[RMDB]
RNA sequence: GGGAACGACUCGAGUAGAGUCGAAAAAGACGAAGUACUACAGUCAAUCGCAUUGACUCCACCACUUCGCAGAUUCAAUGCGAUUGAACCAGAGAUGAAGUACUACAGUCAAACGCAUUGACUACACCACUUCACAGGUUCAAUGCGUUUGAAUCAACGUUUCCACGUAUUUCGAUACGUGGGAACGAAAAGAAACAACAACAACAAC
Reactivity to DMS in 0.01 (KOAc 150mM, MgCl2 10mM, bicine 150mM(pH8.5), 24C), signal-to-noise 4, nucleotides 027 to 156: a070g000a150c040g020a080a040g030u000a060c040u000a120c050a150g000u010c000a010a010u000c080g020c040a300u000u000g000a010c050u000c000c020a100c100c050a170c240u000u010c040g010c030a070g020a050u000u000c010a030a020u010g020c020g000a020u000u000g010a010a010c030c060a300g010a140g010a170u010g010a100a050g000u010a000c000u000a000c000a000g000u000c000a000a000a000c000g000c000a000u000u000g000a000c000u000a110c100a110c020c120a090c120u000u000c100a090c040a140g000g000u000u000c000a020a010u000g010c010g000u000u000u000g000a020a050u010c050a100a120
Reactivity to 2A3 in 0.01 (KOAc 150mM, MgCl2 10mM, bicine 150mM(pH8.5), 24C), signal-to-noise 4, nucleotides 027 to 156: a010g090a030c060g040a030a010g000u000a000c020u020a010c020a010g010u000c000a000a000u000c010g000c000a000u000u000g000a010c020u020c010c020a110c000c020a130c070u230u140c130g000c060a010g000a010u000u000c000a000a000u000g000c000g000a000u000u000g000a010a000c020c020a020g020a000g010a110u150g050a060a000g000u000a000c000u000a000c000a000g000u000c000a000a000a000c000g000c000a000u000u000g000a000c000u010a000c050a010c000c010a030c020u160u100c040a070c000a020g010g000u010u010c000a000a000u000g000c000g000u000u000u000g000a010a020u110c020a020a030
An RNA of 207 nucleotides, treated with DMS and 2A3 and read out base by base.
The reactions ran in a buffer of 150 mM KOAc, 10 mM MgCl2 and 150 mM bicine (pH 8.5), at 24 C.
2A3 adducts were read by reverse transcription with SuperScript II with manganese.
For 2A3, 5,766 sequencing reads were counted.
The data come from the RNA Mapping Database (RMDB), library OK3TST.
DMS adducts were read by reverse transcription with MarathonRT.